Notes: Chemical mapping of a 177-nucleotide RNA with DMS. For DMS, 919 sequencing reads were counted. For DMS the reverse transcriptase was MarathonRT. The data come from the RNA Mapping Database (RMDB), library OK2TST.
[RMDB]
RNA sequence: GGGAACGACUCGAGUAGAGUCGAAAACUCAAUGUUAAGAUGGCCCUUGACAUUGAGAUUGCCACCUACAGGAAGCUGCUGGAAGGCGAGGAGAGCAGGUAGGGAACUCAGACUUGGAUGCGUGAACUCCUGAGGACGAUUUCGAUCGUCCUCAGGAAAAAGAAACAACAACAACAAC
Reactivity to DMS in 0.01 (KOAc 150mM, MgCl2 10mM, bicine 150mM(pH8.5), 24C), signal-to-noise 1, nucleotides 027 to 126: c000u000c000a020a000u000g010u000u000a010a000g000a100u000g020g000c200c050c000u010u000g000a010c000a000u000u000g010a020g010a120u000u010g000c060c060a140c060c030u000a110c080a050g000g020a090a080g000c040u000g010c050u010g000g020a130a040g000g020c100g000a120g000g010a090g000a040g000c110a020g040g000u000a080g010g000g000a040a080c100u000c030a130g000a090c090u000u000g000g010a060u000g030c070g010u000g000a130a120c090